[RMDB]
RNA sequence: GGGAACGACUCGAGUAGAGUCGAAAACUGACCUUCCUGCACAGUCAGGGCCUCGCGCACGGCUCGCUCGACGCGGCGCAACUGUGGGAGGUGGACGGCGAGGUGCGCGUGACCGGCGCCGGGCUGCUGACGUAUACGUAUUCGUACGUAUACGUCAAAAAGAAACAACAACAACAAC
Reactivity to DMS in 0.01 (KOAc 150mM, MgCl2 10mM, bicine 150mM(pH8.5), 24C), signal-to-noise 4, nucleotides 027 to 126: c060u000g010a060c050c030u000u010c010c020u000g000c100a150c070a050g000u020c010a060g020g000g010c030c000u000c070g000c030g010c010a010c040g000g010c020u000c010g030c020u010c030g000a250c040g000c020g010g000c050g030c080a170a110c120u020g000u000g000g010g000a070g020g010u010g020g020a290c250g010g000c000g010a070g000g000u000g000c020g000c040g010u010g000a090c110c080g000g000c030g000c010c010g010g000g010c020u020g000c150
Reactivity to 2A3 in 0.01 (KOAc 150mM, MgCl2 10mM, bicine 150mM(pH8.5), 24C), signal-to-noise 9, nucleotides 027 to 126: c040u070g080a090c000c030u050u030c010c010u090g030c070a040c020a090g030u050c020a020g020g010g010c010c010u020c010g010c000g000c010a020c030g160g020c050u000c020g010c010u120c040g070a050c020g020c020g100g020c070g000c060a120a190c090u140g020u120g090g090g030a100g050g060u050g020g030a060c020g000g010c000g000a020g020g030u010g000c020g000c010g010u020g030a060c030c070g030g000c040g030c000c010g020g010g000c020u040g020c030